[RMDB]
RNA sequence: GGGAACGACUCGAGUAGAGUCGAAAAGUAACCUUUCCUUGUGAGAACGUUGGUUCGACUCCGCUUGCCGACAAUUUCAUAAGAAAAGUUGCAAAUCGAGCUGCUGAGUUACCCGGAGGGGGGUGGCUGACUAUUAACACUUCGGUGUUAAUAGUCAAAAAGAAACAACAACAACAAC
Reactivity to DMS in 0.01 (KOAc 150mM, MgCl2 10mM, bicine 150mM(pH8.5), 24C), signal-to-noise 5, nucleotides 027 to 126: g010u000a020a040c080c050u000u000u000c070c020u000u000g030u000g000a030g000a000a050c300g000u000u010g010g020u000u010c090g010a130c060u010c170c130g010c130u000u000g000c020c000g010a030c020a030a300u000u000u000c010a020u010a030a040g000a020a020a010a040g010u000u000g010c010a030a080a180u010c010g000a020g010c010u000g000c010u000g010a060g000u000u000a130c010c010c010g010g010a070g010g000g000g010g010g000u000g010g000c120
Reactivity to 2A3 in 0.01 (KOAc 150mM, MgCl2 10mM, bicine 150mM(pH8.5), 24C), signal-to-noise 7, nucleotides 027 to 126: g010u020a020a020c010c030u020u010u020c020c010u030u030g020u010g020a030g000a050a020c060g020u010u020g010g030u070u070c040g120a160c070u070c090c040g050c080u030u080g000c000c000g010a020c010a040a050u020u020u010c020a020u030a040a020g020a010a020a010a010g010u010u010g000c020a060a100a130u030c010g000a010g050c000u010g000c010u020g010a000g010u010u030a070c010c000c010g000g050a050g000g010g000g000g010g010u030g020g020c050